[RMDB]
RNA sequence: GGGAACGACUCGAGUAGAGUCGAAAAAUCUGCAGCGAGAAAUGAAGAUGUUGCAGAGUACAAGGUUGAAGCUAGCAAUCCAGCCGGAAAGGCUUCAUCGGUUGCCAACUUGGUUUUGACUCCACGAGUUAAUGUCGGAAUUCGUUCCGACAUUAACAAAAGAAACAACAACAACAAC
Reactivity to 2A3 in 0.01 (KOAc 150mM, MgCl2 10mM, bicine 150mM(pH8.5), 24C), signal-to-noise 4, nucleotides 027 to 126: a000u000c010u000g000c010a000g010c030g080a070g180a190a250a110u300g090a170a090g070a160u240g020u020u010g000c010a000g000a000g000u020a030c030a050a040g070g010u040u040g040a050a010g040c040u050a000g010c060a000a040u000c040c030a020g010c020c020g110g040a260a140a020g010g000c000u060u060c070a130u090c050g030g010u030u020g000c010c010a020a030c060u060u060g060g000u010u030u030u030g020a010c010u010c030c030a070c080g060a070
Reactivity to DMS in 0.01 (KOAc 150mM, MgCl2 10mM, bicine 150mM(pH8.5), 24C), signal-to-noise 5, nucleotides 027 to 126: a130u000c010u000g000c010a020g020c000g020a150g030a140a100a160u020g020a150a110g010a120u000g020u000u000g000c010a010g000a030g010u000a100c100a060a080g010g000u000u000g000a060a050g000c060u010a090g010c040a060a050u000c030c130a050g010c050c050g000g010a060a110a090g000g000c010u000u000c110a050u000c140g010g010u000u000g000c010c040a030a080c060u010u000g010g000u000u000u000u000g010a070c050u000c020c050a100c150g000a130